[RMDB]
RNA sequence: GGGAACGACUCGAGUAGAGUCGAAAAGUAUAGCAUGACUGGCAAUGCGUAUACGAUGAAUCAGCCAGUAAAGAAUCCGUUGUGCGAAAGCACUUCGGUAAUGCAUAAUCGGUUCGAGUACAGCCCGAUACGAGAACCGUUGUUAGUACGGGCCAGAAUCAUCAGUAGUAUUCGUACUACUGAUGAUAAAAGAAACAACAACAACAAC
Reactivity to 2A3 in 0.01 (KOAc 150mM, MgCl2 10mM, bicine 150mM(pH8.5), 24C), signal-to-noise 3, nucleotides 027 to 156: g030u030a020u050a050g000c020a010u030g040a060c000u020g010g030c030a070a030u040g020c060g020u070a040u030a050c110g070a170u160g120a030a130u100c040a030g080c020c010a010g010u100a040a080a000g060a010a040u080c000c020g000u000u020g000u000g010c000g050a060a030a010g000c000a000c000u000u010c000g000g010u020a040a030u100g030c030a070u110a180a100u230c040g010g000u000u000c010g010a010g000u010a030c030a030g020c000c000c000g030a020u000a010c020g020a020g010a030a010c000c000g010u020u050g040u010u080a080g000u030a040c050g090g020g000c030c000a060g020a160
Reactivity to DMS in 0.01 (KOAc 150mM, MgCl2 10mM, bicine 150mM(pH8.5), 24C), signal-to-noise 3, nucleotides 027 to 156: g040u010a060u010a120g010c010a050u010g010a110c040u000g050g000c050a200a070u000g000c030g020u000a100u010a080c090g010a120u020g020a130a120u010c060a150g000c000c000a060g000u000a060a090a140g000a220a180u000c000c000g010u000u000g040u000g030c010g000a190a140a300g020c000a000c000u000u000c010g030g040u000a030a040u010g000c060a150u010a090a090u000c040g040g000u000u000c000g020a300g010u000a020c040a030g000c020c010c020g020a150u000a030c000g000a300g000a020a020c000c010g030u000u000g000u000u000a100g000u010a100c080g000g010g030c030c020a110g020a210
Source information: Chemical mapping of a 207-nucleotide RNA with 2A3 and DMS. The 2A3 profile rests on 2,892 reads. The DMS profile rests on 7,108 reads. Source: RMDB library OK3TST, as collected in RNAgym. For DMS the reverse transcriptase was MarathonRT.